[RMDB]
RNA sequence: GGGAACGACUCGAGUAGAGUCGAAAACUCGACAUCGUGGUGGCCAACGCCGGGGUGCUGGGUUGGGGCAGGCUCUGGGAACUCACCGAUGAGCAGUGGGAGACCGUUAUCGGGGUCAACUUGACGGAGUCAGAGAGUUUUUCGAAACUCUCUGACUAAAAGAAACAACAACAACAAC
Reactivity to 2A3 in 0.01 (KOAc 150mM, MgCl2 10mM, bicine 150mM(pH8.5), 24C), signal-to-noise 2, nucleotides 027 to 126: c000u000c020g040a020c020a100u060c080g210u070g030g000u020g030g090c060c070a170a120c040g000c040c000g000g050g020g010u090g030c060u030g010g060g060u150u130g020g010g000g000c050a030g040g020c020u030c010u050g010g010g010a050a040c030u060c060a060c030c010g070a160u130g030a030g000c040a010g020u050g010g020g040a080g020a040c000c000g070u080u060a080u120c060g050g000g000g010u010c020a010a080c070u020u040g000a010c030g020g010
Reactivity to DMS in 0.01 (KOAc 150mM, MgCl2 10mM, bicine 150mM(pH8.5), 24C), signal-to-noise 3, nucleotides 027 to 126: c020u010c000g040a100c110a060u010c030g020u000g010g020u010g020g010c090c120a090a130c100g020c030c000g010g010g000g010u000g010c050u010g010g020g000u000u000g000g000g000g010c130a050g000g010c040u000c010u000g020g010g010a100a120c080u000c070a090c060c010g010a070u000g000a060g020c050a080g010u010g000g000g020a120g000a130c030c040g000u000u000a040u010c080g000g010g010g010u010c050a040a100c080u000u010g000a050c080g000g010

Chemical mapping of a 177-nucleotide RNA with 2A3 and DMS. For DMS the reverse transcriptase was MarathonRT. DMS (dimethyl sulfate) methylates the pairing face of unpaired adenines and cytosines. For 2A3 the reverse transcriptase was SuperScript II with manganese.